[RMDB]
RNA sequence: GGGAACGACUCGAGUAGAGUCGAAAAGUCGCAGUGGCGUUUGACGCGGCGAUGUCCACGCACGAAGAUCUCCUUGCCACGAUCAGGUACGUCCGCGACCGAACCGGUGACCCAAACGCGUGGCAGACAGUCGUACUUUGUUCGCAAAGUACGACUGAAAAGAAACAACAACAACAAC
Reactivity to 2A3 in 0.01 (KOAc 150mM, MgCl2 10mM, bicine 150mM(pH8.5), 24C), signal-to-noise 7, nucleotides 027 to 126: g010u020c010g000c080a040g020u110g190g020c040g020u050u100u180g060a030c000g000c020g010g020c030g010a040u080g040u040c010c010a030c030g020c000a040c080g070a100a040g020a120u040c040u030c040c020u020u060g000c000c000a020c010g020a140u100c090a040g000g080u100a040c070g050u030c020c010g030c030g040a080c040c040g020a080a050c050c020g030g020u040g040a060c000c020c010a080a080a050c120g000c000g010u010g000g000c000a000g040a010
Reactivity to DMS in 0.01 (KOAc 150mM, MgCl2 10mM, bicine 150mM(pH8.5), 24C), signal-to-noise 3, nucleotides 027 to 126: g000u010c020g030c020a090g060u010g000g020c000g010u000u000u030g030a130c040g000c060g030g000c030g030a020u020g000u020c000c040a040c040g040c050a120c100g010a140a090g010a080u020c060u020c010c060u010u020g020c020c010a050c020g000a120u000c100a140g010g010u030a030c080g030u080c010c020g020c050g020a080c020c090g000a130a070c100c090g020g000u000g000a110c010c030c140a060a110a150c150g010c010g010u010g000g000c030a070g010a230
This 177-nucleotide RNA was probed chemically with 2A3 and DMS. Values cover nucleotides 27 to 126. For DMS, 5,051 sequencing reads were counted.